[RMDB]
RNA sequence: GGGAACGACUCGAGUAGAGUCGAAAAUUCAGCAACAAGGUCUUUCCCAGUAUCGCAUUGCGGUGAUGACAUGGGAGUGAUGGAGUGUCACGACGCUUCAAUAUCGUGGUUGCAGGAGUUGCUGCAAAAAUACGACCGUAUUCGUACGGUCGUAUUUAAAAGAAACAACAACAACAAC
Reactivity to 2A3 in 0.01 (KOAc 150mM, MgCl2 10mM, bicine 150mM(pH8.5), 24C), signal-to-noise 4, nucleotides 027 to 126: u070u030c000a000g000c010a010a010c000a040a080g180g010u000c010u040u100u010c000c000c000a020g010u050a000u030c030g010c130a080u030u300g120c110g120g010u030g020a070u050g100a040c090a250u040g020g000g040a030g030u050g010a040u050g060g080a090g030u040g000u050c010a010c040g050a010c010g030c040u150u120c100a080a060u070a020u160c020g010u030g020g040u100u120g000c020a040g000g100a080g020u040u040g020c000u020g000c000a040a090
Reactivity to DMS in 0.01 (KOAc 150mM, MgCl2 10mM, bicine 150mM(pH8.5), 24C), signal-to-noise 7, nucleotides 027 to 126: u000u000c020a050g020c020a020a030c030a130a160g010g010u000c030u000u010u000c010c000c000a100g000u000a020u000c020g020c030a160u000u000g030c170g020g020u000g010a070u000g000a050c100a100u000g010g010g000a080g010u000g000a060u000g010g010a130g010u010g010u000c040a060c110g010a070c070g010c070u000u010c150a050a090u000a080u000c020g010u010g010g010u000u000g020c040a110g000g000a160g010u000u000g010c000u000g010c200a020a050